Chemical mapping of a 155-nucleotide RNA with DMS and 2A3. Values cover nucleotides 27 to 135. The RNA was probed in 150 mM KOAc, 10 mM MgCl2 and 150 mM bicine (pH 8.5) at 24 C.
[RMDB]
RNA sequence: GGGAACGACUCGAGUAGAGUCGAAAAUGAAAGAAGGAAGAUCAGGAGGAACAAACCGAACUGUCACAAGAGAAGUUCACUGAUUAACCAAAAGACAGAUAAUCGGUAAAAGAAAAAGGCACUAUUCGUAGUGCCAAAAGAAACAACAACAACAAC
Reactivity to DMS in 0.01 (KOAc 150mM, MgCl2 10mM, bicine 150mM(pH8.5), 24C), signal-to-noise 7, nucleotides 027 to 135: u020g020a060a060a070g000a090a060g000g000a040a080g010a030u000c020a040g000g000a080g010g000a060a060c090a050a080a040c010c020g000a020a100c010u010g000u000c020a110c180a080a110g000a070g000a090a060g000u010u000c060a090c070u010g000a070u010u010a040a130c060c050a040a040a070a080g010a010c030a010g000a060u010a030a040u000c000g000g000u000a040a050a050a060g010a020a040a040a060a050g000g000c000a000c010u000a020u000u020c110g010u000a000g000u010g000c000c000a010
Reactivity to 2A3 in 0.01 (KOAc 150mM, MgCl2 10mM, bicine 150mM(pH8.5), 24C), signal-to-noise 5, nucleotides 027 to 135: u160g030a010a020a060g110a030a020g090g030a020a040g010a040u020c010a000g030g020a030g050g040a050a030c030a040a080a020c020c000g000a070a070c010u010g010u020c000a020c030a090a030g050a000g020a160a020g040u060u030c030a030c090u050g020a050u050u060a020a010c000c000a010a030a020a020g010a000c010a000g000a030u030a030a030u010c000g000g010u010a010a050a000a020g090a010a040a010a000a000g000g000c000a000c000u000a000u010u010c090g040u000a000g000u000g000c000c000a010